[RMDB]
Source: RMDB library ARCHII, as collected in RNAgym. Structure probing data (2A3 and DMS) for a 207-nucleotide construct. 2A3 is a SHAPE reagent: it acylates the 2'-hydroxyl of flexible nucleotides of all four kinds. The 2A3 profile rests on 1,653 reads.
RNA sequence: GGGAACGACUCGAGUAGAGUCGAAAAGUAACGUGGGCUUGUAAUCCAAGUGGAGACAUCAAAGUGGUUGAAUAUUGGGCUUUACCAGAAGGUUGGGCUUGGUGGGCUUAGUUCUGGCCUGCCCUGUCCAAGCACAGAGUUGGAUCACGAGGCCCAACAUGUUGUUAGUCUUCGGACUAACAACAUGAAAAGAAACAACAACAACAAC
Reactivity to 2A3 in 0.01 (KOAc 150mM, MgCl2 10mM, bicine 150mM(pH8.5), 24C), signal-to-noise 3, nucleotides 027 to 156: g070u050a050a090c060g010u050g000g030g040c030u060u050g050u140a050a090u060c050c040a050a020g020u020g040g060a040g020a010c010a050u120c100a070a030a090g070u060g030g030u060u100g070a130a050u100a150u090u090g010g010g000c020u070u040u100a040c000c000a010g020a100a020g110g030u030u030g000g000g000c000u000u000g010g000u020g010g010g010c010u030u090a040g020u210u030c080u180g010g010c000c000u000g000c030c000c000u020g020u000c010c010a000a000g080c050a010c040a070g100a030g050u100u080g000g010a020u060c030a010c120g010a020g030g010c000c000c000a000a000
Reactivity to DMS in 0.01 (KOAc 150mM, MgCl2 10mM, bicine 150mM(pH8.5), 24C), signal-to-noise 1, nucleotides 027 to 156: g040u000a030a040c060g040u000g010g020g040c030u010u000g010u000a030a080u010c030c010a070a120g060u000g030g010a130g010a080c100a030u020c050a050a120a190g020u000g050g000u000u010g030a050a110u000a150u010u000g000g000g000c040u000u000u000a050c050c030a120g020a160a080g010g000u000u000g020g020g040c150u000u010g010g000u020g000g040g000c000u020u000a080g030u020u010c200u010g040g000c010c020u010g040c010c010c040u000g010u000c010c010a010a060g000c030a130c100a160g020a110g010u000u000g000g010a090u000c040a070c050g000a050g000g000c000c000c000a020a110